[RMDB]
RNA sequence: GGGAACGACUCGAGUAGAGUCGAAAAGAUAUGGACUUGAAAGACGAUGAUCAGUAGGGAGACUUCUAUCGGAAACGAUAGAGUGGUCUUUGAUCUACUGAGUCAUCGUCUUUCAAGUCCUAAGUCACAAGUAUAUGCUGUUCGCAGCAUAUACUUGAAAAGAAACAACAACAACAAC
Reactivity to DMS in 0.01 (KOAc 150mM, MgCl2 10mM, bicine 150mM(pH8.5), 24C), signal-to-noise 4, nucleotides 027 to 126: g010a040u000a300u010g010g000a020c010u000u000g000a020a010a010g010a010c000g010a010u000g000a080u000c010a010g010u000a010g010g010g000a000g010a010c000u000u000c000u000a010u000c000g000g000a150a080a230c010g000a010u000a000g000a020g030u000g010g000u000c000u000u000u020g000a060u000c000u000a000c000u000g000a050g010u000c000a000u000c000g010u000c000u000u000u000c000a000a010g010u000c000c010u000a000a070g010u000c040a260
Structure probing data (DMS) for a 177-nucleotide construct. It was measured as part of the RMDB library TTRINS. The DMS profile rests on 8,794 reads. DMS adducts were read by reverse transcription with MarathonRT. Conditions: 150 mM KOAc, 10 mM MgCl2 and 150 mM bicine (pH 8.5), 24 C.